[RMDB]
RNA sequence: GGGAACGACUCGAGUAGAGUCGAAAACAGACUCGAGCGAAAGCUCGGCGAAAGCCGCGUACAUGUGAGCGUCGGCUUGUGUACAGUCGACAGUUACUCUUCGGAGUAACAAUAGAAACAACAACAAAUAGGGAUAUCAGUUCGCUGAUAUCCCUAUAAAAGAAACAACAACAACAAC
Reactivity to 2A3 in 0.01 (KOAc 150mM, MgCl2 10mM, bicine 150mM(pH8.5), 24C), signal-to-noise 5, nucleotides 027 to 126: c020a010g040a040c020u020c040g000a020g010c010g050a120a020a000g000c010u010c000g000g000c000g060a120a020a000g040c010c010g000c000g040u100a070c050a240u210g080u130g170a100g040c060g110u190c050g120g000c030u040u040g090u060g040u050a100c040a040g010u000c000g040a000c000a030g000u000u000a010c000u000c010u030u090c270g100g010a000g010u000a000a000c000a000a010u110a050g040a060a080a010c050a030a020c000a050a000c010a010a140
Reactivity to DMS in 0.01 (KOAc 150mM, MgCl2 10mM, bicine 150mM(pH8.5), 24C), signal-to-noise 5, nucleotides 027 to 126: c100a210g000a090c010u010c010g000a010g020c000g000a140a110a180g010c000u000c000g020g000c060g010a110a040a020g010c080c010g000c030g020u000a060c060a130u020g020u070g040a110g010c020g000u030c060g000g010c010u010u010g020u020g010u030a080c130a060g010u000c030g000a140c210a040g000u000u000a000c000u000c000u020u050c110g000g000a020g000u000a000a010c000a120a090u040a060g000a120a080a090c060a050a060c190a090a080c200a050a060